[RMDB]
RNA sequence: GGGAACGACUCGAGUAGAGUCGAAAAGGUCACCCUAGCGUUGGCCCGAUGUAGCGCCAUCUCGGCCGAGCGAUGAGACAGCACCGAGGUAAGUCGAGUCAGCGACGUCGAAAACGCGAAAACCUCCAACGCGAUGAUCGUUCGCGAUCAUCGCGUUAAAAGAAACAACAACAACAAC
Reactivity to 2A3 in 0.01 (KOAc 150mM, MgCl2 10mM, bicine 150mM(pH8.5), 24C), signal-to-noise 2, nucleotides 027 to 126: g050g000u060c060a010c000c000c080u070a050g040c030g030u000u020g020g000c000c000c020g050a000u180g100u170a030g070c050g020c050c010a070u030c000u000c030g030g010c010c000g100a060g000c000g020a000u140g000a020g000a040c020a050g060c000a060c040c030g110a070g010g140u200a080a120g000u010c000g010a070g020u000c020a000g030c000g020a030c000g030u050c000g030a010a010a050a130c010g010c000g060a080a000a030a030c060c060u010c050c020
Reactivity to DMS in 0.01 (KOAc 150mM, MgCl2 10mM, bicine 150mM(pH8.5), 24C), signal-to-noise 1, nucleotides 027 to 126: g000g000u020c070a020c090c030c040u000a000g000c170g000u000u020g000g030c100c050c070g000a140u040g000u000a080g000c150g090c150c140a030u000c120u000c120g000g000c040c000g020a300g000c000g000a080u000g000a300g000a070c000a080g070c290a070c000c000g000a190g000g000u080a080a300g140u000c080g050a140g000u000c290a170g000c020g070a080c300g000u000c000g000a000a030a110a180c010g000c050g000a000a050a050a220c000c050u000c120c170
Structure probing data (2A3 and DMS) for a 177-nucleotide construct. It was measured as part of the RMDB library OK1LIB. The reactions ran in a buffer of 150 mM KOAc, 10 mM MgCl2 and 150 mM bicine (pH 8.5), at 24 C. For 2A3 the reverse transcriptase was SuperScript II with manganese.